An RNA of 177 nucleotides, treated with 2A3 and read out base by base. 2A3 adducts were read by reverse transcription with SuperScript II with manganese.
RNA sequence: GGGAACGACUCGAGUAGAGUCGAAAACAAAACUGACCAUCUAUGAGGUCAUACAUCGUCAUAGGAAAACAAAACAAAACUGACCAGUUAUGAGGUCAUACAUCGUCAUAACAAACAAAACAACAAACGGCGAUGGUAAUUUCGAUUACCAUCGCCGAAAAGAAACAACAACAACAAC
Reactivity to 2A3 in 0.01 (KOAc 150mM, MgCl2 10mM, bicine 150mM(pH8.5), 24C), signal-to-noise 1, nucleotides 027 to 126: c020a000a000a000a010c020u000g000a010c000c000a090u000c000u000a000u000g000a020g000g000u060c010a060u080a070c280a180u180c070g070u000c000a000u110a000g130g030a000a090a150a130c120a090a070a000a000c000a030a030a030a030c190u040g000a000c000c000a000g000u000u000a010u000g000a000g000g040u000c000a000u140a080c270a000u280c230g040u000c000a000u050a010a000c000a000a000a000c150a060a000a000a000c150a000a000c000a000a170a000